The record gives the reactivity of an RNA of 177 nucleotides to DMS. The reactions ran in a buffer of 150 mM KOAc, 10 mM MgCl2 and 150 mM bicine (pH 8.5), at 24 C. Reactivities are given for positions 27 through 126. For DMS, 3,130 sequencing reads were counted.
RNA sequence: GGGAACGACUCGAGUAGAGUCGAAAAGAUAUGGAACACAGCCAUUCUUCGGAGCUUCAACAGCUCCCUCCUCGGAAACGAGGAAGGAGACAUGAAGGCUCCGAAGAAUGGCUGUGUUCCUAAGUCACUUCAUACUGUAGUUCGCUACAGUAUGAAGAAAAGAAACAACAACAACAAC
Reactivity to DMS in 0.01 (KOAc 150mM, MgCl2 10mM, bicine 150mM(pH8.5), 24C), signal-to-noise 2, nucleotides 027 to 126: g010a050u010a300u010g000g010a000a000c020a010c000a000g020c020c000a020u000u000c000u010u000c000g010g000a020g010c000u010u000c040a030a020c040a050g000c000u010c000c010c010u010c000c000u000c000g000g000a130a080a250c000g020a030g020g040a000a000g000g010a010g000a020c170a060u010g020a170a010g000g010c000u000c000c000g000a000a000g010a000a000u000g000g020c010u010g010u000g000u000u000c000c000u000a000a100g010u010c070a280